Structure probing data (2A3 and DMS) for a 177-nucleotide construct. Reactivities are given for positions 27 through 126. For 2A3 the reverse transcriptase was SuperScript II with manganese. The 2A3 profile rests on 801 reads.
[RMDB]
RNA sequence: GGGAACGACUCGAGUAGAGUCGAAAAGAAGAGAAGUGAGUAAACGCCUAUCCGGUAUAAGCACAGCCCGUCAAAAGGCGUGCGGCGAGGGCACCAGAGGCUGUGCUUAUAACUGGGCCCUCGAAGAAGCUCACUAGCUAUUCGUAGCUAGUGAGCUAAAAGAAACAACAACAACAAC
Reactivity to 2A3 in 0.01 (KOAc 150mM, MgCl2 10mM, bicine 150mM(pH8.5), 24C), signal-to-noise 2, nucleotides 027 to 126: g150a000a000g080a000g000a110a000g020u060g160a000g020u220a080a050a050c000g010c000c000u020a030u030c000c010g130g010u030a060u000a170a000g030c010a000c000a000g000c000c060c040g040u100c070a120a070a060a210g040g100c180g030u000g000c000g000g000c050g070a100g050g070g010c040a020c020c020a030g050a040g050g000c000u020g010u010g020c000u090u190a070u000a020a090c000u000g000g000g000c000c000c000u030c000g030a140a020g000a040
Reactivity to DMS in 0.01 (KOAc 150mM, MgCl2 10mM, bicine 150mM(pH8.5), 24C), signal-to-noise 1, nucleotides 027 to 126: g070a080a040g000a070g000a100a110g030u000g000a030g000u030a020a120a020c050g010c000c090u000a050u050c000c060g010g070u040a100u050a000a000g000c000a000c010a060g000c010c010c160g000u000c300a050a000a170a030g000g000c070g000u000g000c140g000g000c070g030a080g020g000g000c010a060c010c010a060g020a110g010g010c020u000g030u010g000c010u030u000a010u010a030a060c020u000g000g000g000c030c010c000u020c070g000a030a030g000a090